[RMDB]
RNA sequence: GGGAACGACUCGAGUAGAGUCGAAAAUGUAGCUUCGGCUACAAAUGAGGGGUCCCUAGCGCGUAUGAUGACCGACAUGGUCUGAAGCCUCCACGGACCAACAGCGCAAGUACGCGUGCUAGGGACGGAGGCACCCCGGGGAACCGUUCGCGGUUAAAUAAGUAUCACCAUUCGUGGUGAUACUUAUAAAAGAAACAACAACAACAAC
Reactivity to 2A3 in 0.01 (KOAc 150mM, MgCl2 10mM, bicine 150mM(pH8.5), 24C), signal-to-noise 4, nucleotides 027 to 156: u040g010u010a000g000c020u040u060c300g100g000c020u030a010c020a000a090a020u200g060a130g000g050g020g010u000c000c000c000u000a000g020c020g000c010g010u070a150u300g180a140u210g050a200c060c020g020a080c060a120u150g010g000u010c000u010g010a040a020g010c000c010u000c000c000a040c020g010g020a000c050c030a010a040c070a080g180c040g000c130a080a110g090u180a140c190g010c010g010u020g020c010u010a000g040g000g000a010c000g000g000a000g000g010c000a030c000c000c000c000g000g000g000g010a000a020c030c000g030u060u060c230g010c020g080g020u030u060a110a190
Reactivity to DMS in 0.01 (KOAc 150mM, MgCl2 10mM, bicine 150mM(pH8.5), 24C), signal-to-noise 2, nucleotides 027 to 156: u010g010u010a020g010c010u000u000c230g040g030c020u000a030c000a010a080a070u000g010a130g020g010g020g010u030c020c000c000u000a030g000c020g010c020g040u000a090u000g010a230u000g020a080c110c010g010a140c120a300u000g020g000u010c000u000g020a050a090g010c000c010u000c030c010a300c030g000g000a040c000c020a030a170c080a120g030c040g010c050a120a220g020u000a050c050g000c000g040u000g000c020u000a020g040g000g000a030c010g000g020a030g060g050c010a180c000c020c010c000g030g020g020g030a120a080c060c010g000u000u000c150g010c020g030g020u000u000a040a080